About this RNA
Chemical mapping of a 207-nucleotide RNA with 2A3 and DMS. The DMS profile rests on 3,754 reads. Reactivities are rounded to 0.1 and cut off at 0 and 3. For DMS the reverse transcriptase was MarathonRT. High DMS reactivity at an A or C suggests that its Watson-Crick edge is free.
RNA sequence: GGGAACGACUCGAGUAGAGUCGAAAAUCAUGUAUUUGGAAUCUGAAAGAAUGAGCACCUUCCAAUUGAAAGAGUUCCAAGGGCAUUAGUAUACUAAAGGAUCCAAAUUGCAGCUAAGCCAAGGAGAUGGAAAGGAGGAUUCAGUAAAGAAUCUGAGUCAUUAACACGGAUUCGUCCGUGUUAAUGAAAAAGAAACAACAACAACAAC
Reactivity to 2A3 in 0.01 (KOAc 150mM, MgCl2 10mM, bicine 150mM(pH8.5), 24C), signal-to-noise 4, nucleotides 027 to 156: u100c020a010u080g090u120a090u030u070u040g030g020a060a100u050c040u060g040a110a120a060g060a070a110u090g010a040g040c030a070c020c000u030u020c030c020a110a080u050u090g040a120a040a040g060a010g050u120u010c040c010a020a030g030g010g000c020a000u010u080a050g040u080a050u030a150c050u100a060a100a040g030g020a040u020c020c030a030a020a060u130u120g010c010a000g020c030u060a050a020g030c040c010a050a030g050g010a050g020a040u050g020g030a010a040a080g040g010a030g000g000a010u050u010c000a010g020u100a060a130a060g010a000a030u030c020u070g030a050g110
Reactivity to DMS in 0.01 (KOAc 150mM, MgCl2 10mM, bicine 150mM(pH8.5), 24C), signal-to-noise 3, nucleotides 027 to 156: u010c060a100u010g040u010a060u000u010u000g000g020a050a090u010c010u010g030a140a080a140g010a100a110u010g020a130g000c050a030c030c030u000u000c010c030a050a230u000u000g000a090a080a180g000a120g000u000u010c020c030a030a120g010g020g000c020a080u000u000a070g020u000a090u010a110c080u000a050a090a230g010g010a100u000c030c000a020a070a100u010u000g040c020a090g000c040u000a070a080g040c020c050a040a130g020g010a070g000a160u010g020g010a020a050a110g000g010a220g000g000a080u000u000c030a050g020u000a080a060a190g010a020a050u000c010u010g000a180g020